[RMDB]
RNA sequence: GGGAACGACUCGAGUAGAGUCGAAAAAAGGACUGGUUCGCCAGUCCUUAUUCAUUCGUACGCAACGAUGCGUAAGUCAUUACGCAAAUGACUAAAAGCGUAUACGAAAGGACUUCGGUCCUUUCAAAACUAUCCCAAUAUUCGUAUUGGGAUAGUUAAAAGAAACAACAACAACAAC
Reactivity to DMS in 0.01 (KOAc 150mM, MgCl2 10mM, bicine 150mM(pH8.5), 24C), signal-to-noise 9, nucleotides 027 to 126: a020a010g000g010a010c000u000g010g010u000u010c220g020c000c000a010g000u000c000c010u000u000a010u000u010c070a130u010u000c130g010u000a010c010g010c020a070a100c100g010a250u000g010c000g010u000a010a020g010u010c300a080u000u000a010c030g000c020a020a080a120u010g000a100c190u000a050a050a080a120g000c000g010u000a010u000a090c210g000a010a010a010g000g000a020c000u000u010c150g030g000u000c000c000u000u000u000c000a060a050
Reactivity to 2A3 in 0.01 (KOAc 150mM, MgCl2 10mM, bicine 150mM(pH8.5), 24C), signal-to-noise 7, nucleotides 027 to 126: a000a000g000g000a000c010u010g000g030u040u060c130g030c060c000a000g000u000c000c000u000u000a000u000u020c010a010u040u060c060g020u010a010c010g000c030a110a040c070g080a060u060g000c010g000u010a000a020g110u110c100a170u040u020a010c010g000c020a030a050a100u150g050a060c070u160a030a040a030a050g000c010g010u020a030u010a050c090g000a000a000a000g010g000a000c000u030u060c240g060g000u000c000c000u000u000u000c000a000a000

The data come from the RNA Mapping Database (RMDB), library M2PK50. The record gives the reactivity of an RNA of 177 nucleotides to DMS and 2A3. For DMS, 22,245 sequencing reads were counted.